RNA sequence: GGGAACGACUCGAGUAGAGUCGAAAAGAUAUGGAGCGUGAACUACUCGGAACUGGAGCGUUGAAAGAUUGAAACUCGGAAACGAGUUUCAAUCUGGAGCUCCUAAGUACGAGCACGCUCCUAAGUCCUGUUGAAAGAAGUUCGCUUCUUUCAACAGAAAAGAAACAACAACAACAAC
Reactivity to DMS in 0.01 (KOAc 150mM, MgCl2 10mM, bicine 150mM(pH8.5), 24C), signal-to-noise 3, nucleotides 027 to 126: g010a130u000a230u010g020g000a010g020c010g020u000g000a060a040c060u030a300c020u000c000g000g000a210a180c300u020g000g000a010g020c020g000u000u040g020a240a130a040g000a020u020u000g000a020a010a000c000u000c020g010g020a120a090a190c000g010a020g010u000u000u000c000a010a010u000c000u000g000g000a100g020c000u010c000c000u000a000a010g010u000a150c010g000a020g000c010a010c010g010c000u000c000c000u000a020a070g010u010c010
Reactivity to 2A3 in 0.01 (KOAc 150mM, MgCl2 10mM, bicine 150mM(pH8.5), 24C), signal-to-noise 1, nucleotides 027 to 126: g060a020u110a080u250g010g000a010g000c000g000u010g020a100a060c070u200a060c000u300c030g010g000a030a000c030u020g030g030a000g050c020g130u300u240g120a150a060a000g020a040u010u000g000a020a000a000c000u000c010g010g050a040a040a030c010g040a000g000u010u000u010c010a020a000u000c000u000g000g000a010g000c000u020c010c000u000a000a020g010u010a010c000g000a000g000c010a000c000g000c000u000c000c010u000a000a010g000u040c010
The record gives the reactivity of an RNA of 177 nucleotides to DMS and 2A3. For 2A3 the reverse transcriptase was SuperScript II with manganese. Reactivities are given for positions 27 through 126. DMS adducts were read by reverse transcription with MarathonRT. The 2A3 profile rests on 2,995 reads.